Description: This 207-nucleotide RNA was probed chemically with 2A3. Conditions: 150 mM KOAc, 10 mM MgCl2 and 150 mM bicine (pH 8.5), 24 C. The 2A3 profile rests on 1,269 reads. Source: RMDB library RNAMAK, as collected in RNAgym.
RNA sequence: GGGAACGACUCGAGUAGAGUCGAAAAGACGAAUGUUUCGACAUUCGUCAAAAAGCGUACUACUGUCGAGGGUGAACUACUAUUUAUCCCAAAUAGGAUAGGGUAGCACCUACCCACCGACAGUAUCGCAAAAAAGUCUCCACUUCGGUGGAGACAACCUGGUAAACAGCUUCGGCUGUUUACCAGGAAAAGAAACAACAACAACAAC
Reactivity to 2A3 in 0.01 (KOAc 150mM, MgCl2 10mM, bicine 150mM(pH8.5), 24C), signal-to-noise 2, nucleotides 027 to 156: g000a000c000g000a000a010u020g020u020u150u190c300g020a000c000a000u000u000c000g000u010c000a010a010a010a010a010g040c050g030u080a080c030u000a010c000u050g000u020c000g030a040g010g020g000u030g030a150a050c020u030a000c010u030a130u270u300u020a040u090c050c020c040a200a240a210u190a090g000g010a010u000a000g030g020g000u010a000g030c020a060c020c000u050a030c000c000c040a160c100c010g000a010c000a000g010u010a080u030c000g000c040a030a030a030a030a030a030g000u000c000u000c000c000a000c000u050u100c230g110g000u000g010g000a010g000a000c000a000a000